[RMDB]
RNA sequence: GGGAACGACUCGAGUAGAGUCGAAAAGAUAUGGAGAUUCGUUGAUCGUGUGUGGACGAUGAAAUCGGAAACGAUGGAGUCCCACACGGGAGAAUCUCCUAAGUCAAAAGCGGACUUCGGUCCGCAACUCCCUGAUAUGGUUCGCCAUAUCAGGGAGAAAAGAAACAACAACAACAAC
Reactivity to DMS in 0.01 (KOAc 150mM, MgCl2 10mM, bicine 150mM(pH8.5), 24C), signal-to-noise 2, nucleotides 027 to 126: g010a030u000a300u000g000g010a030g020a010u000u000c010g030u010u020g010a010u020c000g000u000g010u000g000u030g040g010a030c000g020a150u000g010a070a120a010u000c020g010g010a150a070a180c020g000a000u000g030g000a070g000u000c000c000c000a000c000a000c000g000g000g010a010g020a040a000u000c020u000c000c000u020a000a070g000u010c040a100a100a120a170g020c000g010g000a010c000u000u010c170g010g010u000c000c010g060c000a000a040
Reactivity to 2A3 in 0.01 (KOAc 150mM, MgCl2 10mM, bicine 150mM(pH8.5), 24C), signal-to-noise 1, nucleotides 027 to 126: g000a020u040a060u110g010g010a010g010a030u000u000c030g140u280u060g010a020u020c010g000u000g000u000g130u300g030g000a000c040g110a300u080g010a040a030a020u010c010g030g000a060a060a010c010g000a000u020g040g030a040g000u000c000c000c000a000c000a000c000g010g000g000a030g010a000a000u010c000u000c000c000u000a020a020g030u010c020a000a000a120a060g000c000g000g000a000c000u030u100c300g110g030u000c040c000g040c000a010a010